Chemical mapping of a 177-nucleotide RNA with DMS and 2A3.
High 2A3 reactivity points to a flexible backbone, as in loops and unpaired stretches.
RNA sequence: GGGAACGACUCGAGUAGAGUCGAAAAUCUUGCCCAGUUGGCGGUCAACGAUGUUGCCGGCGGCAUCGGUGAUGACGCAGGCGUAGGGCGUGGCCGGGUCGGUGGUCAGCGUGACGUAGGGCAGGAACUACAUGCUAGUCUUCGGACUAGCAUGUAGAAAAGAAACAACAACAACAAC
Reactivity to DMS in 0.01 (KOAc 150mM, MgCl2 10mM, bicine 150mM(pH8.5), 24C), signal-to-noise 3, nucleotides 027 to 126: u000c020u000u000g020c010c000c000a180g010u000u010g020g020c010g010g000u000c010a030a040c020g010a040u000g010u000u010g010c000c010g010g030c010g000g000c010a010u000c000g040g010u010g010a020u000g010a060c010g010c010a040g000g010c020g000u000a090g020g000g010c040g020u000g010g010c000c010g010g010g020u000c030g010g010u000g010g010u000c020a090g020c040g050u000g010a030c030g000u000a110g000g000g010c000a030g000g010a040a200
Reactivity to 2A3 in 0.01 (KOAc 150mM, MgCl2 10mM, bicine 150mM(pH8.5), 24C), signal-to-noise 4, nucleotides 027 to 126: u020c000u020u030g020c020c000c010a030g020u040u070g090g050c010g010g020u040c010a030a010c010g030a040u050g060u210u220g030c020c000g020g000c010g000g000c010a020u020c060g300g140u230g040a060u040g010a010c000g000c010a010g030g050c040g040u090a060g080g050g060c080g090u130g110g000c010c000g040g070g020u030c010g000g090u030g010g040u030c050a060g040c110g090u070g010a010c020g050u140a150g010g000g000c010a000g030g000a020a010
Overview: For DMS the reverse transcriptase was MarathonRT. The data come from the RNA Mapping Database (RMDB), library OK2TST. 2A3 adducts were read by reverse transcription with SuperScript II with manganese. Values cover nucleotides 27 to 126.